[RMDB]
RNA sequence: GGGAACGACUCGAGUAGAGUCGAAAACUCAUGGCUUUGAAUUAACGUCUGCAUCAUACUUUUGCAAGAUAGGUAAGGAACAGAAGUGUUGCAUGUGCAAUAGACGCGCUGCAGCGUACUCUUCACCACAGAUCCUCCUUCGGGAGGAUCAAAAGAAACAACAACAACAAC
Reactivity to 2A3 in 0.01 (KOAc 150mM, MgCl2 10mM, bicine 150mM(pH8.5), 24C), signal-to-noise 7, nucleotides 027 to 129: c030u030c010a110u080g060g010c090u100u040u090g060a120a040u110u130a050a030c020g030u020c030u000g000c000a050u040c000a050u120a230c030u060u100u040u080g100c050a070a080g010a090u110a100g040g060u060a080a050g040g010a070a000c020a050g040a070a010g060u010g000u080u030g030c030a080u180g020u000g050c040a040a060u080a230g140a080c080g000c010g000c010u010g020c010a000g010c000g000u080a100c010u030c000u060u030c040a020c070c030a030c020a020
Reactivity to DMS in 0.01 (KOAc 150mM, MgCl2 10mM, bicine 150mM(pH8.5), 24C), signal-to-noise 3, nucleotides 027 to 129: c020u000c000a110u050g000g000c070u000u010u000g030a150a090u040u090a030a080c210g030u010c000u030g040c000a100u060c080a100u040a110c130u020u000u040u030g050c070a110a040g040a070u080a040g030g000u030a050a050g000g080a070a140c060a100g000a140a040g010u020g000u050u000g030c040a050u060g000u020g020c020a080a060u050a110g040a130c130g010c080g060c090u020g020c020a000g020c000g030u070a020c140u030c100u000u000c060a140c040c070a050c110a060
Chemical mapping of a 170-nucleotide RNA with 2A3 and DMS. For DMS, 11,417 sequencing reads were counted.